RNA sequence: GGGAACGACUCGAGUAGAGUCGAAAACUGCGUGCAUCAGACGUGGGUUAAACACUUUAUUGAGCGAGUGGAUGAUCAAGCCGACGCCACUUAUCGCCAUGAAAGUGAAAGAGACUGGGAUCAUCGACACCUGACGUAGCUUCGGCUACGUCAGGUGAAAAGAAACAACAACAACAAC
Reactivity to 2A3 in 0.01 (KOAc 150mM, MgCl2 10mM, bicine 150mM(pH8.5), 24C), signal-to-noise 2, nucleotides 027 to 126: c010u010g000c030g030u050g070c010a150u110c110a150g040a130c030g010u080g030g080g000u080u130a070a140a010c020a000c030u010u070u050a090u020u190g040a080g040c020g000a000g000u040g070g000a150u000g040a080u090c070a130a080g060c110c110g060a000c030g000c040c000a000c000u070u080a100u250c000g000c020c000a040u070g060a050a030a000g040u070g020a120a030a000g000a020g000a010c060u180g020g070g020a030u100c040a010u070c070g080a040
Reactivity to DMS in 0.01 (KOAc 150mM, MgCl2 10mM, bicine 150mM(pH8.5), 24C), signal-to-noise 2, nucleotides 027 to 126: c020u030g040c050g000u010g030c140a090u010c210a110g020a030c080g030u000g010g030g000u000u000a110a100a150c070a000c000u000u010u020a130u000u000g010a120g030c000g000a030g040u000g000g000a020u000g010a090u020c070a060a110g040c220c090g010a110c130g010c040c000a030c020u000u000a160u000c030g030c060c030a060u020g010a130a040a020g050u000g020a020a150a060g040a110g030a020c030u000g010g030g030a080u010c030a060u000c040g020a200